[RMDB]
RNA sequence: GGGAACGACUCGAGUAGAGUCGAAAACUAUUUAUAGACAGAACAGUGGAAAACGUAUAUCGCUAUAAACCUUAUACGCCGAAUCUUCCAGUCGUACCAUUCCACAUAGGCGAGGCAUAAGCGAAAGGGGAUGAUGCAUAUUCGUAUGCAUCAUCCCAAAAGAAACAACAACAACAAC
Reactivity to 2A3 in 0.01 (KOAc 150mM, MgCl2 10mM, bicine 150mM(pH8.5), 24C), signal-to-noise 2, nucleotides 027 to 126: c000u000a010u010u180u060a150u080a050g160a040c110a030g120a100a020c000a010g030u060g140g020a130a020a000a000c040g010u040a010u020a010u080c000g000c010u010a000u180a200a170a000c010c000u040u000a050u020a040c000g020c070c020g020a060a110u010c000u120u000c010c000a010g010u000c000g000u000a110c010c010a040u110u000c030c000a070c000a140u060a050g000g040c000g000a020g000g010c030a010u080a130a000g060c080g060a020a000a000g020
Reactivity to DMS in 0.01 (KOAc 150mM, MgCl2 10mM, bicine 150mM(pH8.5), 24C), signal-to-noise 1, nucleotides 027 to 126: c050u000a000u000u030u090a160u000a070g000a150c060a180g000a180a240c110a000g080u050g000g010a010a030a110a080c060g000u050a030u020a050u000c150g000c040u000a040u000a000a190a050c030c020u000u030a060u010a130c100g000c130c000g010a090a050u090c070u000u120c030c020a000g010u000c000g050u000a070c020c100a170u000u000c000c000a000c060a000u000a060g040g040c050g050a050g000g000c060a100u010a080a060g000c080g020a050a080a030g010
An RNA of 177 nucleotides, treated with 2A3 and DMS and read out base by base. Source: RMDB library OK1LIB, as collected in RNAgym. High 2A3 reactivity points to a flexible backbone, as in loops and unpaired stretches. 2A3 adducts were read by reverse transcription with SuperScript II with manganese. For 2A3, 1,371 sequencing reads were counted.